[RMDB]
RNA sequence: GGGAACGACUCGAGUAGAGUCGAAAAUCAUUGGCUUCGCUGCGCGGUGCGUUGCCUAGGCUUCAGAUGCUUCGUACUGUUGCCAACGUUGCAAUUUCCAAACGCUAAUGCGAAAGUGUGCAAACAAAGUUUUCACGAAUUUCGAUUCGUGAAAACUAAAAGAAACAACAACAACAAC
Reactivity to DMS in 0.01 (KOAc 150mM, MgCl2 10mM, bicine 150mM(pH8.5), 24C), signal-to-noise 2, nucleotides 027 to 126: u000c110a100u010u020g020g020c020u000u000c010g060c050u010g030c050g000c010g020g010u000g010c060g020u000u000g000c020c020u000a090g010g030c120u000u000c080a030g010a090u040g000c070u000u020c090g000u010a050c030u000g020u000u010g000c000c010a040a090c240g010u000u000g000c050a010a070u000u000u020c030c040a040a120a050c110g040c050u000a100a110u030g020c030g000a020a030a040g040u010g030u010g000c130a100a090a080c170a080a100
Reactivity to 2A3 in 0.01 (KOAc 150mM, MgCl2 10mM, bicine 150mM(pH8.5), 24C), signal-to-noise 1, nucleotides 027 to 126: u090c000a010u010u180g100g000c000u000u000c000g000c040u040g020c000g000c030g000g000u000g010c000g030u030u000g000c020c000u050a090g000g080c010u110u060c040a030g000a270u100g030c020u110u110c030g080u070a030c000u000g060u110u040g000c020c030a040a010c060g040u060u040g000c030a050a000u000u040u000c080c000a030a140a060c030g000c050u120a130a000u160g020c030g050a060a080a020g060u120g040u070g040c060a000a070a140c060a010a200
Conditions: 150 mM KOAc, 10 mM MgCl2 and 150 mM bicine (pH 8.5), 24 C.
The record gives the reactivity of an RNA of 177 nucleotides to DMS and 2A3.
For DMS, 1,255 sequencing reads were counted.
It was measured as part of the RMDB library M2PK90.
For DMS the reverse transcriptase was MarathonRT.
High DMS reactivity at an A or C suggests that its Watson-Crick edge is free.